[RMDB]
RNA sequence: GGGAACGACUCGAGUAGAGUCGAAAAAAGACAGAGGGAAAAUGAGAUUACAUUGCUCUAAAGUUUUUGAAACCCAAGAGCAAGUGCCCGAAACAACUGAAUCACCUGACCUCACUUUCCUAGAUAGAUCUCACUAUUCAUUCGUGAAUAGUGAGAUAAAAGAAACAACAACAACAAC
Reactivity to DMS in 0.01 (KOAc 150mM, MgCl2 10mM, bicine 150mM(pH8.5), 24C), signal-to-noise 5, nucleotides 027 to 126: a050a040g000a090c120a080g020a110g020g000g000a040a050a080a070u010g010a080g000a140u010u010a100c060a090u000u000g010c000u000c010u000a060a150a220g000u000u000u000u010u020g010a060a040a050c010c010c050a250a040g000a000g000c010a020a030g010u000g010c040c050c050g000a090a050a100c150a060a080c080u010g010a050a060u010c030a040c050c060u000g000a130c050c000u000c030a040c060u000u010u000c010c010u000a070g010a130u010a090g000
Reactivity to 2A3 in 0.01 (KOAc 150mM, MgCl2 10mM, bicine 150mM(pH8.5), 24C), signal-to-noise 4, nucleotides 027 to 126: a000a000g070a040c130a010g060a040g030g020g030a020a100a030a040u110g010a070g020a090u020u030a030c030a060u060u030g010c000u000c000u030a060a070a050g020u020u000u040u140u170g150a090a040a020c010c000c010a020a010g000a000g000c000a020a020g050u030g080c030c030c060g050a040a070a030c050a040a030c050u090g040a030a040u030c030a030c070c030u030g130a030c000c010u000c010a020c020u020u030u010c010c010u010a050g040a080u130a060g170